[RMDB]
RNA sequence: GGGAACGACUCGAGUAGAGUCGAAAACCCAGUUCCGGGGCCGUUCACUGGAUCCGAAUCCUCUAGAAGGAUAAUAUAGGCACUCCAUACCCUACUCCGACUCAAUACGUCCCCGUCGUACAGAAUGCAAGGGCAUCCCUGUUCGCAGGGAUGCCAACAGUUAUACUAACUUCGGUUAGUAUAACUGAAAAGAAACAACAACAACAAC
Reactivity to DMS in 0.01 (KOAc 150mM, MgCl2 10mM, bicine 150mM(pH8.5), 24C), signal-to-noise 1, nucleotides 027 to 156: c000c000c050a160g040u010u010c030c020g030g000g040g030c040c050g000u000u000c100a070c110u000g000g050a070u010c030c070g000a090a140u000c010c000u000c040u010a180g020a140a010g000g000a060u010a110a150u010a110u010a070g010g010c020a060c040u010c090c050a160u000a060c130c040c020u000a110c090u000c040c020g020a060c030u000c000a080a110u000a120c070g000u000c000c000c000c020g000u000c060g000u040a180c040a100g010a080a200u000g000c020a070a090g010g010g030c000a040u000c000c000c000u000g000u000u000c290g040c000a020g020g020g010a040u000g030c000c000a010a030
Reactivity to 2A3 in 0.01 (KOAc 150mM, MgCl2 10mM, bicine 150mM(pH8.5), 24C), signal-to-noise 3, nucleotides 027 to 156: c000c000c020a030g040u050u040c010c010g000g000g000g000c010c020g030u100u090c080a050c110u040g010g030a070u090c010c020g040a030a040u000c030c020u070c040u110a190g060a250a070g220g010a020u050a070a180u230a050u070a100g020g000c040a010c050u050c040c000a050u060a140c010c010c040u020a060c060u060c050c020g070a050c010u010c120a070a100u050a100c020g030u030c000c000c030c000g000u050c010g000u050a050c040a070g140a190a090u130g080c050a040a070g100g000g000c000a000u000c000c000c000u020g020u030u100c140g000c040a000g000g010g050a000u010g000c000c000a000a000